Source: RMDB library OK2TRN, as collected in RNAgym. An RNA of 177 nucleotides, treated with DMS and 2A3 and read out base by base. Conditions: 150 mM KOAc, 10 mM MgCl2 and 150 mM bicine (pH 8.5), 24 C. Reactivities are given for positions 27 through 126. For DMS the reverse transcriptase was MarathonRT. For 2A3 the reverse transcriptase was SuperScript II with manganese.
RNA sequence: GGGAACGACUCGAGUAGAGUCGAAAAUAGGUAGAGCUGGUAAUCGUGCUGUUCAACACGACCACAGUAUUCAGUGCCUCGGUCAGUCAAGAUUCGCAGCAUUGGCAGUUCAUGCGCCUCAAAGAAAUAGGGUAGCUAUAUUCGUAUAGCUACCCUAAAAAGAAACAACAACAACAAC
Reactivity to DMS in 0.01 (KOAc 150mM, MgCl2 10mM, bicine 150mM(pH8.5), 24C), signal-to-noise 4, nucleotides 027 to 126: u000a040g010g030u010a050g020a090g020c020u000g010g020u000a070a150u010c110g020u010g000c030u010g020u000u000c150a090a170c150a010c050g010a040c040c050a130c120a070g020u010a070u000u010c140a110g020u000g020c050c020u000c300g010g000u000c030a090g020u000c150a070a110g010a090u020u000c090g010c050a030g010c030a030u000u010g010g020c030a030g000u000u000c040a070u010g000c110g020c020c010u000c150a060a050a110g000a050a090a130
Reactivity to 2A3 in 0.01 (KOAc 150mM, MgCl2 10mM, bicine 150mM(pH8.5), 24C), signal-to-noise 2, nucleotides 027 to 126: u170a010g070g000u020a010g000a000g080c010u050g040g300u130a070a020u100c030g060u040g080c020u050g060u150u090c000a030a020c010a020c060g000a010c000c000a040c030a010g030u040a140u140u280c090a080g150u020g060c000c000u010c020g000g000u010c020a110g010u050c020a060a100g000a080u100u160c090g000c070a000g000c010a000u020u030g020g050c020a000g030u040u030c020a030u160g040c000g000c010c010u060c060a150a150a040g080a040a100a100